The record gives the reactivity of an RNA of 177 nucleotides to 2A3 and DMS. The reactions ran in a buffer of 150 mM KOAc, 10 mM MgCl2 and 150 mM bicine (pH 8.5), at 24 C. For 2A3 the reverse transcriptase was SuperScript II with manganese. Source: RMDB library M2PK50, as collected in RNAgym.
RNA sequence: GGGAACGACUCGAGUAGAGUCGAAAAUCCUUCCUUUUCGAAGGAAGGACAGUGCACAGUCUUCGCAUCUGUGAAUCACACAACUGCCGUGUCUAUGCGAGGUUUUAAUCAAGUUCGCUUGAUUAAAGUCCUAAAGUACAUUCGUGUACUUUAGGACAAAAGAAACAACAACAACAAC
Reactivity to 2A3 in 0.01 (KOAc 150mM, MgCl2 10mM, bicine 150mM(pH8.5), 24C), signal-to-noise 9, nucleotides 027 to 126: u010c010c000u000u010c010c000u060u050u030u100c240g130a020a000g000g000a000a000g000g000a000c010a020g040u060g010c010a010c000a010g010u010c050u070u020c080g000c010a020u020c010u010g020u020g060a090a110u150c030a020c010a010c010a120a180c070u110g050c020c020g130u100g060u080c070u100a030u020g000c010g000a010g020g020u040u050u010u030a010a010u010c000a010a010g010u040u060c160g070c100u000u010g000a000u000u010a010a010a020
Reactivity to DMS in 0.01 (KOAc 150mM, MgCl2 10mM, bicine 150mM(pH8.5), 24C), signal-to-noise 9, nucleotides 027 to 126: u000c000c000u000u010c000c000u000u000u000u010c180g020a020a010g000g000a020a000g010g010a010c070a040g010u000g010c020a010c010a020g000u000c070u010u000c030g010c010a030u000c020u000g010u000g000a120a060u000c180a180c100a090c140a080a100c100u000g000c030c030g010u010g010u010c140u000a020u000g010c020g010a030g010g010u010u000u000u000a000a010u000c010a010a010g000u000u010c220g010c000u000u000g000a010u000u000a010a010a050